[RMDB]
RNA sequence: GGGAACGACUCGAGUAGAGUCGAAAAGAUAUGGAUCGGAUCAAAUACUAUCUAUGUUGAGACGAAGUAUCGGAAACGAUACAUGCGUCAAUGAUGCAUAGAGUAGUAUUUGAUCCGAUCCUAAGUCCGUAUUAAAGAAGUUCGCUUCUUUAAUACGAAAAGAAACAACAACAACAAC
Reactivity to 2A3 in 0.01 (KOAc 150mM, MgCl2 10mM, bicine 150mM(pH8.5), 24C), signal-to-noise 1, nucleotides 027 to 126: g050a020u090a050u160g000g020a000u010c010g010g010a000u000c000a000a030a020u000a000c000u010a020u040c000u000a030u020g050u040u040g070a040g000a010c000g010a040a010g000u000a000u000c000g030g000a080a040a030c010g020a000u000a020c040a040u300g020c000g000u000c020a100a300u090g010a020u110g000c000a010u010a020g000a000g000u010a000g000u000a000u000u000u000g000a000u000c010c010g000a010u000c000c010u010a000a010g010u000c010
Reactivity to DMS in 0.01 (KOAc 150mM, MgCl2 10mM, bicine 150mM(pH8.5), 24C), signal-to-noise 6, nucleotides 027 to 126: g010a090u010a300u010g010g010a010u000c000g010g000a010u000c000a000a010a010u000a010c010u000a050u000c010u000a000u000g010u000u010g000a120g010a010c000g000a050a030g030u000a000u000c000g010g000a160a100a280c000g010a020u000a010c000a020u010g010c010g010u000c000a170a210u010g000a110u000g010c000a010u000a010g000a060g020u000a010g010u000a010u000u000u000g000a000u000c000c000g000a000u000c000c000u000a020a100g010u000c040